RNA sequence: GGGAACGACUCGAGUAGAGUCGAAAAAUAAAUCCCGGUCCCGUCAGACAAGGAGGAGGAGGGAACUUUCUAGGGAAACCACUCCCUCAAACCUUCUCUUCGGAAAAAGAGGGAGGAAAGAAAAAAACUAUACAAUAGCGUUCGCGCUAUUGUAUAGAAAAGAAACAACAACAACAAC
Reactivity to 2A3 in 0.01 (KOAc 150mM, MgCl2 10mM, bicine 150mM(pH8.5), 24C), signal-to-noise 2, nucleotides 027 to 126: a020u110a000a040a030u050c000c000c020g030g020u000c000c010c010g160u070c040a040g000a200c060a090a100g090g000a020g010g000a010g000g040a020g060g030g050a030a040c030u130u140u050c070u130a060g110g000g000a100a010a080c020c000a070c070u010c000c000c010u000c010a100a210a150c000c000u000u020c040u000c000u070u080c020g050g020a120a100a050a050a020g060a040g020g030g000a020g050g020a120a060a040g060a080a160a020a000a000a010a000
Reactivity to DMS in 0.01 (KOAc 150mM, MgCl2 10mM, bicine 150mM(pH8.5), 24C), signal-to-noise 2, nucleotides 027 to 126: a060u020a080a150a090u000c020c000c000g030g000u000c030c000c000g000u000c100a080g030a170c170a060a090g000g000a010g000g000a050g000g000a030g020g000g000a040a050c100u000u010u000c120u010a100g010g010g000a060a060a080c080c190a200c090u000c000c000c000u000c070a030a100a160c060c030u000u000c020u010c030u000u010c080g000g000a040a020a060a120a070g010a150g000g000g000a030g020g000a020a110a100g020a010a020a020a130a100a070a150
An RNA of 177 nucleotides, treated with 2A3 and DMS and read out base by base. It was measured as part of the RMDB library M2PK90. The RNA was probed in 150 mM KOAc, 10 mM MgCl2 and 150 mM bicine (pH 8.5) at 24 C.